[RMDB]
RNA sequence: GGGAACGACUCGAGUAGAGUCGAAAAGCUUGAUAUCACCAUUGUUCUUUGACACCCUCCUAAUUAAGGCUCCUGGGGUAUUCUGCAUAACAUGUAUGAGGCAGCCUGUUUUAAUGCUUAAUUAGUGCCUAUCCAGUGAAUUCGUUCACUGGAUAGGAAAAGAAACAACAACAACAAC
Reactivity to 2A3 in 0.01 (KOAc 150mM, MgCl2 10mM, bicine 150mM(pH8.5), 24C), signal-to-noise 2, nucleotides 027 to 126: g060c020u060u080g060a020u040a060u180c060a080c080c030a090u030u120g040u060u060c020u030u080u100g030a000c000a060c010c000c010u040c000c000u030a100a080u130u040a080a020g040g010c030u030c070c070u090g010g000g020g010u000a080u100u040c040u050g000c040a040u060a170a100c060a050u100g060u090a090u200g030a030g060g000c030a000g000c010c020u030g040u000u070u000u100a130a050u120g020c010u020u060a050a030u090u080a160g060u040g130
Reactivity to DMS in 0.01 (KOAc 150mM, MgCl2 10mM, bicine 150mM(pH8.5), 24C), signal-to-noise 6, nucleotides 027 to 126: g020c070u000u010g010a100u010a060u010c050a090c040c040a100u010u000g010u000u000c060u000u010u010g010a130c190a100c030c020c010u000c050c020u000a050a050u000u000a050a060g010g010c060u000c060c060u000g000g000g010g010u000a090u000u010c050u000g010c030a040u000a080a110c100a300u010g010u000a040u010g020a060g000g000c100a060g010c020c030u000g000u010u000u000u000a070a050u010g010c020u000u000a050a070u010u000a040g010u010g020